RNA sequence: GGGAACGACUCGAGUAGAGUCGAAAACUUGAGCAGGGCUUGCUUUAUAUGCCUCAGGAGUUAACUACAUCGGACAGUGUUCUUACGUUUGAACUGACGGACAUCGUGCAUUGUCGUAUGGCAGCACAGAUAGUGACGGAUUCGUCCGUCACUAUCUAAAAGAAACAACAACAACAAC
Reactivity to DMS in 0.01 (KOAc 150mM, MgCl2 10mM, bicine 150mM(pH8.5), 24C), signal-to-noise 5, nucleotides 027 to 126: c040u000u000g010a060g010c060a110g010g000g000c060u010u000g030c050u010u010u010a070u000a090u010g020c030c030u010c070a100g010g000a080g010u010u010a060a110c050u010a060c080a060u020c080g020g000a040c070a050g010u000g000u000u000c050u000u000a090c100g010u010u000u010g010a090a100c130u000g000a060c080g000g010a120c110a070u000c100g010u010g000c020a050u000u010g040u000c010g020u000a030u000g000g000c050a030g010c070a050c130
Reactivity to 2A3 in 0.01 (KOAc 150mM, MgCl2 10mM, bicine 150mM(pH8.5), 24C), signal-to-noise 3, nucleotides 027 to 126: c010u000u090g010a010g000c010a060g040g030g030c020u040u010g030c000u050u120u050a210u030a040u210g000c000c010u090c020a030g070g040a030g070u100u110a100a030c010u100a030c050a100u050c040g050g000a000c000a020g020u000g010u120u030c040u080u070a060c030g070u000u020u140g100a120a060c060u050g030a000c040g000g020a010c010a070u130c060g000u000g010c010a080u050u020g000u030c020g080u160a080u120g040g000c020a020g020c040a040c010
Structure probing data (DMS and 2A3) for a 177-nucleotide construct. The 2A3 profile rests on 3,469 reads. The RNA was probed in 150 mM KOAc, 10 mM MgCl2 and 150 mM bicine (pH 8.5) at 24 C. The DMS profile rests on 6,548 reads. 2A3 is a SHAPE reagent: it acylates the 2'-hydroxyl of flexible nucleotides of all four kinds. It was measured as part of the RMDB library OK2TRN.